[RMDB]
RNA sequence: GGGAACGACUCGAGUAGAGUCGAAAAUCCUAAUUCGACACUAGGUGGUAACCCCUCGCUAUUAUUCGGAAUAGGACACUCUCUAUCAGAAUGAAUUCUUGCUGUAAUAACAGAUAGAGUAGGUUGUCUCCCUUGAUCUUUUCGAAGAUCAAGGGAGAAAAGAAACAACAACAACAAC
Reactivity to DMS in 0.01 (KOAc 150mM, MgCl2 10mM, bicine 150mM(pH8.5), 24C), signal-to-noise 1, nucleotides 027 to 126: u000c000c000u000a040a060u000u000c080g000a140c250a090c120u000a010g000g000u050g000g000u000a070a140c160c020c000c000u000c000g050c030u000a000u000u000a070u000u000c030g010g010a000a170u000a000g010g020a000c110a230c090u010c070u050c000u000a040u000c000a100g100a030a080u000g000a040a090u000u010c000u000u030g020c140u000g080u070a140a000u000a090a040c180a040g000a000u000a000g000a000g000u010a190g010g000u100u000g000u060
Reactivity to 2A3 in 0.01 (KOAc 150mM, MgCl2 10mM, bicine 150mM(pH8.5), 24C), signal-to-noise 3, nucleotides 027 to 126: u000c000c000u050a030a090u070u040c040g060a020c000a020c120u010a020g010g000u050g000g080u060a080a100c000c020c000c010u050c010g130c000u010a030u200u030a060u050u230c030g100g090a030a040u030a030g030g000a000c000a000c060u010c000u000c000u020a000u070c040a030g080a260a090u090g020a130a050u140u080c050u060u180g130c030u000g040u100a050a140u110a160a140c010a000g010a030u000a010g000a020g090u050a060g010g070u040u050g050u030
Conditions: 150 mM KOAc, 10 mM MgCl2 and 150 mM bicine (pH 8.5), 24 C.
Chemical mapping of a 177-nucleotide RNA with DMS and 2A3.
DMS adducts were read by reverse transcription with MarathonRT.
The 2A3 profile rests on 1,388 reads.